[RMDB]
RNA sequence: GGGAACGACUCGAGUAGAGUCGAAAAGCAGCGAGACGUAGACCGAGUUCAACUCGGCCAGGGUCGCGGCGUUGUAGGAGUUUCCGCCGGAGAGCUGGGCGACUUUCUUCAUCGUCUCGUCGUCGACUAGCUCGGUGCGUUUCGACGCACCGAGCUAAAAAGAAACAACAACAACAAC
Reactivity to 2A3 in 0.01 (KOAc 150mM, MgCl2 10mM, bicine 150mM(pH8.5), 24C), signal-to-noise 1, nucleotides 027 to 126: g070c060a020g000c000g020a020g000a070c130g000u170a000g040a060c010c040g000a040g020u160u300c140a160a050c000u000c040g000g000c030c000a100g000g000g030u010c010g000c000g020g020c020g030u050u140g050u070a080g000g110a060g140u040u220u000c050c120g030c010c010g050g020a090g000a050g210c050u200g000g030g060c040g020a030c000u060u190u030c020u110u130c040a020u070c090g010u000c000u000c040g010u000c000g120u070c000g020a050c010
This 177-nucleotide RNA was probed chemically with 2A3. The reactions ran in a buffer of 150 mM KOAc, 10 mM MgCl2 and 150 mM bicine (pH 8.5), at 24 C. The 2A3 profile rests on 493 reads.